The record gives the reactivity of an RNA of 177 nucleotides to 2A3 and DMS. Values cover nucleotides 27 to 126.
[RMDB]
RNA sequence: GGGAACGACUCGAGUAGAGUCGAAAACUGGGUACUAGAGUAUGUAAAGGCUGUCUCGGUCUCUAGUAUCUAACUCAUGCACUACUUGUAGACUAGACUGAGAUAGCCUUUAGUCAUAAGUGGUGUAGGAACUCUUAGUAUUCGUACUAGGAGUUCCAAAAGAAACAACAACAACAAC
Reactivity to 2A3 in 0.01 (KOAc 150mM, MgCl2 10mM, bicine 150mM(pH8.5), 24C), signal-to-noise 8, nucleotides 027 to 126: c030u030g020g000g040u010a010c000u010a010g020a020g070u080a020u100g040u040a010a000a010g010g000c010u010g000u000c000u000c010g050g030u020c020u000c000u040a000g000u010a030u030c010u010a050a030c010u030c110a070u210g070c070a060c130u120a050c020u160u080g060u110a030g010a030c010u010a010g010a040c010u030g010a010g000a020u020a000g000c000c000u000u000u000a000g000u000c000a000u000a090a030g070u030g080g030u050g060u060a080
Reactivity to DMS in 0.01 (KOAc 150mM, MgCl2 10mM, bicine 150mM(pH8.5), 24C), signal-to-noise 6, nucleotides 027 to 126: c050u010g020g000g020u010a020c050u010a060g010a090g020u020a020u010g010u010a020a020a010g000g000c000u000g000u000c000u000c010g010g000u010c040u010c090u010a010g010u010a060u020c060u000a060a080c110u020c110a080u010g010c090a060c090u010a070c090u020u000g010u000a040g000a060c040u000a030g000a030c010u010g000a020g000a020u000a010g000c000c000u000u000u000a000g010u040c030a040u000a020a050g010u000g000g000u000g010u010a150